[RMDB]
RNA sequence: GGGAACGACUCGAGUAGAGUCGAAAAGAAAGAAAGCUAAUCGGAUUGCGCAGUGGUAAGGGUUCACGACGGGUCUCCUCUGCCGACACUUCGAUGUUCUACUACGCCGUACGCAGCAAAAUCCUAACCGAAAUUAUAAGUUCGCUUAUAAUUUCGGAAAAGAAACAACAACAACAAC
Reactivity to DMS in 0.01 (KOAc 150mM, MgCl2 10mM, bicine 150mM(pH8.5), 24C), signal-to-noise 5, nucleotides 027 to 126: g010a120a110a090g000a070a100a080g020c040u010a080a050u000c060g000g020a090u020u010g010c080g010c020a060g010u010g020g000u010a050a110g010g000g000u010u010c050a090c070g010a090c080g010g000g000u000c030u020c020c010u000c020u030g000c010c020g000a100c060a030c070u000u000c040g000a050u000g000u000u000c020u000a060c030u030a060c090g010c020c010g000u010a060c090g000c060a050g010c090a040a070a080a110u000c010c010u000a090a210
Reactivity to 2A3 in 0.01 (KOAc 150mM, MgCl2 10mM, bicine 150mM(pH8.5), 24C), signal-to-noise 4, nucleotides 027 to 126: g120a020a060a000g060a010a050a000g020c010u020a050a000u050c020g020g020a030u010u040g010c030g000c040a010g010u020g040g040u070a050a060g070g000g000u040u030c030a010c040g050a000c030g030g010g000u010c010u000c010c000u000c020u020g000c010c020g020a020c020a000c020u010u020c010g020a030u040g010u010u010c000u010a050c000u000a010c040g000c010c020g050u020a030c020g000c020a030g000c010a020a000a000a080u010c010c000u010a010a040